RNA sequence: GGGAACGACUCGAGUAGAGUCGAAAAUUAAGCUUUGUUAUGCCACAGUUUACAUGUUACAAUUAAACAUUCUUCACGUGAGAAUUGUUUACAAAUUGUCUCUAAACACAUGUGAAUCACAGGCCUCGUUACGCUAAGAAUUCGUUCUUAGCGUAACAAAAGAAACAACAACAACAAC
Reactivity to DMS in 0.01 (KOAc 150mM, MgCl2 10mM, bicine 150mM(pH8.5), 24C), signal-to-noise 7, nucleotides 027 to 126: u030u020a090a080g010c090u010u010u000g020u000u010a080u010g020c030c010a100c190a180g000u000u000u000a010c030a000u000g010u000u000a020c010a020a020u000u000a030a020a010c000a030u000u000c000u000u000c040a130c300g020u010g000a000g000a020a010u000u030g020u010u010u000a060c300a300a040a040u000u000g010u000c170u020c250u010a040a020a040c130a020c010a040u000g010u000g000a020a010u010c070a110c170a150g010g010c020c170u010c160
Reactivity to 2A3 in 0.01 (KOAc 150mM, MgCl2 10mM, bicine 150mM(pH8.5), 24C), signal-to-noise 9, nucleotides 027 to 126: u120u060a090a010g060c070u120u160u130g060u090u090a060u140g020c010c010a040c030a050g000u010u010u010a020c030a020u020g010u010u030a010c000a010a010u020u010a020a000a000c000a010u010u000c000u020u040c060a140c300g130u290g050a000g020a010a020u150u110g010u010u000u000a060c060a000a080a010u010u010g010u000c040u000c050u270a040a050a000c050a000c000a050u030g010u000g020a000a010u060c020a050c050a060g020g000c000c030u050c040
Structure probing data (DMS and 2A3) for a 177-nucleotide construct. It was measured as part of the RMDB libraries RFM100 and RFMREP. The RNA was probed in 150 mM KOAc, 10 mM MgCl2 and 150 mM bicine (pH 8.5) at 24 C. DMS adducts were read by reverse transcription with MarathonRT.